[RMDB]
RNA sequence: GGGAACGACUCGAGUAGAGUCGAAAAGAUAUGGACCACCCAUAGCCGAUAAGAGCCAGUCGGAAACGACUGCGCUCUUUUGACGGCUUAAGGUGGUCCUAAGUCAAAACUGACGUUCGCGUCAGAAGGUUUUACGUAUGUUCGCAUACGUAAAACCAAAAGAAACAACAACAACAAC
Reactivity to 2A3 in 0.01 (KOAc 150mM, MgCl2 10mM, bicine 150mM(pH8.5), 24C), signal-to-noise 1, nucleotides 027 to 126: g020a000u040a050u080g020g000a000c020c000a010c040c010c000a070u130a010g000c000c010g160a090u060a190a000g000a000g010c010c010a000g030u000c010g030g000a060a040a050c010g020a010c000u000g000c010g000c000u030c020u030u000u010u010g000a020c010g000g040c040u000u000a030a030g020g000u000g000g000u000c010c000u000a000a000g010u020c000a010a010a020a090c000u010g000a000c000g010u060u090c300g040c030g170u000c000a010g030a050a200
Reactivity to DMS in 0.01 (KOAc 150mM, MgCl2 10mM, bicine 150mM(pH8.5), 24C), signal-to-noise 3, nucleotides 027 to 126: g000a030u000a300u010g010g000a000c010c000a020c010c000c010a230u010a060g020c000c000g020a240u000a020a020g010a030g000c010c000a010g010u010c000g010g000a120a100a170c000g020a020c000u000g000c280g040c000u000c000u010u010u010u010g010a160c160g010g030c000u000u000a120a050g010g010u010g010g010u000c000c000u000a000a070g010u000c030a090a050a110a220c000u000g000a000c000g000u010u020c270g030c030g040u020c000a010g000a110a090

An RNA of 177 nucleotides, treated with 2A3 and DMS and read out base by base. The 2A3 profile rests on 3,827 reads. The DMS profile rests on 2,414 reads.